[RMDB]
RNA sequence: GGGAACGACUCGAGUAGAGUCGAAAAUGAGAUGGAGUCUCGCUUUGUUGUCCAGGCUGGAGUGCAGUGGCGCAAUCUCAGCUCACUGCAACCUUCGCCUCCCGGGUUCAAGCAAUUCUCCUGCCUCAGCCCCCUGAGUAGCUGGGAUUACAGGCAACGCUAAUUAGGUAUUCGUACCUAAUUAGCGAAAAGAAACAACAACAACAAC
Reactivity to 2A3 in 0.01 (KOAc 150mM, MgCl2 10mM, bicine 150mM(pH8.5), 24C), signal-to-noise 4, nucleotides 027 to 156: u040g000a000g000a000u020g010g000a000g010u010c010u010c060g000c020u050u050u170g060u050u040g060u040c000c000a010g000g010c030u200g020g010a100g010u100g000c010a010g000u000g010g010c110g000c130a100a140u090c080u050c170a030g000c010u030c010a000c000u000g000c010a030a090c010c000u040u040c030g070c020c000u060c050c060c020g030g000g000u030u040c020a010a000g000c020a030a000u020u000c000u010c010c000u040g090c020c000u000c000a030g020c000c010c000c000c020u040g030a040g130u080a020g040c010u050g030g000g040a090u100u110a060c050a040g050g000c030a090a020
Reactivity to DMS in 0.01 (KOAc 150mM, MgCl2 10mM, bicine 150mM(pH8.5), 24C), signal-to-noise 2, nucleotides 027 to 156: u000g000a040g010a200u000g030g020a090g000u010c010u000c020g000c050u000u020u000g000u000u010g030u010c020c030a090g030g030c020u000g030g020a050g020u010g060c000a030g010u010g020g000c090g040c040a090a080u000c180u000c100a140g020c010u000c020a040c020u000g010c000a030a010c050c010u010u000c200g000c030c000u000c010c010c070g010g030g030u010u000c030a000a100g030c000a070a100u000u000c010u000c010c000u000g000c070c010u000c010a030g010c020c020c020c040c060u010g000a120g000u010a050g030c020u000g000g010g000a130u000u000a050c020a020g010g000c010a090a200